An RNA of 207 nucleotides, treated with 2A3 and read out base by base. The RNA was probed in 150 mM KOAc, 10 mM MgCl2 and 150 mM bicine (pH 8.5) at 24 C. Source: RMDB library RSTRND, as collected in RNAgym. Reactivities are given for positions 27 through 156. 2A3 adducts were read by reverse transcription with SuperScript II with manganese.
[RMDB]
RNA sequence: GGGAACGACUCGAGUAGAGUCGAAAAGGAAGCGUGCCGGUGCAGGCAAGAGACCACCGUAAGCGUCGUUGCAACCAAUUAAGCGCCGAUUCCAAUCAGCGCGACUACGCACUCGCUGCCUAAGCGACUGCGUGUCUGUCAGCCCGGGAGAGCCCUCGUAACUCGCAAAGUUCGCUUUGCGAGUUACAAAAGAAACAACAACAACAAC
Reactivity to 2A3 in 0.01 (KOAc 150mM, MgCl2 10mM, bicine 150mM(pH8.5), 24C), signal-to-noise 1, nucleotides 027 to 156: g100g030a040a010g030c050g030u030g050c020c020g010g000u030g030c010a020g040g000c000a040a010g020a000g010a010c000c000a010c020c000g110u140a010a030g000c020g020u000c000g010u010u020g000c000a010a070c050c010a040a080u190u190a090a020g000c000g010c020c060g040a030u100u120c050c060a090a040u030c020a020g000c000g000c010g000a000c010u140a020c000g020c050a000c020u020c000g030c000u030g000c010c100u180a050a000g000c020g000a000c000u000g010c010g000u000g040u020c030u040g100u040c070a020g030c020c020c060g000g000g000a030g020a020g030c000c000c000u040c030